[RMDB]
Chemical mapping of a 177-nucleotide RNA with 2A3 and DMS.
RNA sequence: GGGAACGACUCGAGUAGAGUCGAAAAGAUAUGGAAUCCUCAGGGACAUGCGUUUUGAUCGGAAACGAUCACUACGCAACAGCCCUAGGAUUCCUAAGUCAAAGUAUAGGACCUUCGGGUCCUAUACGAAACGCAUCCAGUUCGCUGGAUGCGUUUCAAAAGAAACAACAACAACAAC
Reactivity to 2A3 in 0.01 (KOAc 150mM, MgCl2 10mM, bicine 150mM(pH8.5), 24C), signal-to-noise 2, nucleotides 027 to 126: g000a000u020a000u060g000g010a000a000u020c030c020u100c280a110g050g020g040a070c190a300u300g030c000g000u010u010u000u000g000a000u010c000g000g000a010a040a010c010g010a000u010c010a010c000u020a000c000g000c020a010a050c090a010g000c020c020c030u000a000g000g010a000u010u000c000c010u000a000a000g010u000c040a260a080a090g000u000a010u030a010g000g010a000c020c000u000u140c300g080g020g000u040c000c000u000a000u000a010c000
Reactivity to DMS in 0.01 (KOAc 150mM, MgCl2 10mM, bicine 150mM(pH8.5), 24C), signal-to-noise 1, nucleotides 027 to 126: g000a020u010a030u010g000g000a050a030u000c010c000u030c270a010g020g010g040a030c100a130u020g000c000g000u000u000u000u000g000a010u000c010g000g010a010a010a040c000g000a010u010c000a010c030u000a010c000g040c010a050a020c230a100g010c000c000c000u020a030g000g000a030u000u000c000c000u010a010a060g010u000c000a170a150a190g010u000a000u000a000g000g010a010c000c000u000u030c260g070g010g010u000c000c000u000a000u000a000c000
Source: RMDB library TTRDES, as collected in RNAgym.
2A3 adducts were read by reverse transcription with SuperScript II with manganese.
The DMS profile rests on 1,666 reads.
Values cover nucleotides 27 to 126.